[RMDB]
RNA sequence: GGGAACGACUCGAGUAGAGUCGAAAACGUUACUGGUCACGGCACGCGCGGAUCCGUGCGGCAGGUACAUUCACGUCCUUCGUCCUGGAUCCGGACGGUGGAUCCAAGAGAAGUUAUAGGAUCCUGGAUGAUUGGGUUUUUUCGAAAACCCAAUCAUAAAAGAAACAACAACAACAAC
Reactivity to DMS in 0.01 (KOAc 150mM, MgCl2 10mM, bicine 150mM(pH8.5), 24C), signal-to-noise 4, nucleotides 027 to 126: c080g000u000u010a100c070u010g000g020u010c070a110c090g020g010c080a080c050g010c050g010c060g000g000a070u010c060c010g030u000g010c030g000g000c050a050g010g000u020a060c070a150u000u000c150a110c150g000u000c020c010u010u010c020g010u000c010c010u000g000g000a030u000c010c010g000g010a020c050g010g000u000g000g000a030u000c020c020a080a190g000a150g010a090a070g010u000u020a110u000a180g010g010a020u000c000c000u010g020g010
Reactivity to 2A3 in 0.01 (KOAc 150mM, MgCl2 10mM, bicine 150mM(pH8.5), 24C), signal-to-noise 3, nucleotides 027 to 126: c020g050u060u080a060c040u060g110g080u080c030a040c060g050g010c020a040c140g030c010g010c030g040g040a120u090c130c000g000u030g010c000g030g000c030a010g030g040u190a030c030a030u030u150c080a010c080g010u000c010c010u040u060c010g040u020c000c010u070g000g030a030u020c010c000g000g000a010c000g000g000u010g000g020a030u000c020c020a080a000g060a020g050a140a060g080u180u160a160u080a170g000g030a010u010c020c010u040g100g050

Conditions: 150 mM KOAc, 10 mM MgCl2 and 150 mM bicine (pH 8.5), 24 C. The record gives the reactivity of an RNA of 177 nucleotides to DMS and 2A3. Reactivities are rounded to 0.1 and cut off at 0 and 3. For DMS, 4,049 sequencing reads were counted.